[RMDB]
RNA sequence: GGGAACGACUCGAGUAGAGUCGAAAAACCCACAGCCAAGGGAACGGGCUUGGAAUAAUCAGCGGGGAAAGAAGACCCUGUUGAGCUUGACUCUAGUCUGACGUUGUGAAAUGACUUGGGAGGUGUAAUGUCUCUACCGGUUCGCCGGUAGAGACAUAAAAGAAACAACAACAACAAC
Reactivity to DMS in 0.01 (KOAc 150mM, MgCl2 10mM, bicine 150mM(pH8.5), 24C), signal-to-noise 2, nucleotides 027 to 126: a120c020c000c000a070c090a200g020c060c050a040a070g000g020g040a300a080c080g000g000g020c050u000u010g030g000a100a170u000a060a070u000c000a000g000c000g050g000g000g000a130a080a130g040a160a130g000a180c000c000c010u050g000u000u000g040a030g010c110u080u000g000a300c170u000c000u000a090g000u010c010u020g000a020c160g000u000u010g000u000g010a040a160a110u030g000a050c000u000u000g010g050g040a040g000g020u000g000u020a040
Reactivity to 2A3 in 0.01 (KOAc 150mM, MgCl2 10mM, bicine 150mM(pH8.5), 24C), signal-to-noise 1, nucleotides 027 to 126: a000c000c000c000a010c020a000g000c000c000a040a000g080g010g090a300a120c080g000g000g000c010u050u010g050g000a050a000u060a060a210u100c020a000g070c000g000g020g000g000a080a220a160g300a000a000g000a000c050c000c000u000g000u050u070g000a020g000c020u030u120g090a000c000u000c000u010a070g000u000c000u000g000a050c010g040u020u070g050u000g040a140a000a000u230g050a000c000u010u020g210g000g000a130g050g000u000g060u070a230

Chemical mapping of a 177-nucleotide RNA with DMS and 2A3. The DMS profile rests on 1,416 reads. 2A3 adducts were read by reverse transcription with SuperScript II with manganese. The 2A3 profile rests on 413 reads.